[RMDB]
RNA sequence: GGGAACGACUCGAGUAGAGUCGAAAACUUCUAUCUCCGAAUUAUUUUUGUCUCUAAUGUCAUUGUGGUUACUGGAGAAUAUGUUGUAAAAUGGUAGAAAAGGCUUAUAUGGCCAUGAUACAACUUGACUACCAAGAACUGAUAAAGCAUGAAACAACACUAUUAUCACGUUCGCGUGAUAAUAGUGAAAAGAAACAACAACAACAAC
Reactivity to DMS in 0.01 (KOAc 150mM, MgCl2 10mM, bicine 150mM(pH8.5), 24C), signal-to-noise 3, nucleotides 027 to 156: c050u000u010c080u010a170u010c000u000c020c040g010a060a120u000u010a040u020u010u000u000u010g020u000c010u000c000u000a100a080u010g020u000c020a220u000u010g040u000g020g020u000u000a040c050u010g020g000a090g020a110a240u000a040u010g000u010u000g010u000a020a060a170a060u010g010g010u000a060g000a080a170a060a110g030g000c120u000u010a130u000a120u010g020g010c040c040a020u010g010a300u000a050c040a030a040c030u010u000g010a300c030u000a060c000c000a030a130g000a080a070c050u010g010a080u000a020a080a060g040c060a070u010g020a090a040a070c050a120a210
Reactivity to 2A3 in 0.01 (KOAc 150mM, MgCl2 10mM, bicine 150mM(pH8.5), 24C), signal-to-noise 4, nucleotides 027 to 156: c030u150u020c040u070a190u020c040u060c040c040g070a120a100u130u090a140u120u240u030u100u110g040u000c050u030c060u120a110a100u140g060u050c060a060u040u120g030u090g110g010u010u050a120c050u080g030g000a030g020a010a010u170a090u110g010u000u010g000u010a010a060a050a000u010g010g000u020a040g150a070a170a070a050g100g010c080u220u150a120u060a060u300g100g000c010c000a010u010g020a020u020a010c010a030a010c050u030u050g040a040c020u040a120c020c010a000a020g050a050a000c030u020g050a040u140a080a080a000g040c050a060u060g100a040a060a030c030a000a010
Notes: The record gives the reactivity of an RNA of 207 nucleotides to DMS and 2A3. DMS adducts were read by reverse transcription with MarathonRT. DMS (dimethyl sulfate) methylates the pairing face of unpaired adenines and cytosines. For DMS, 3,885 sequencing reads were counted. Source: RMDB library OK3TST, as collected in RNAgym.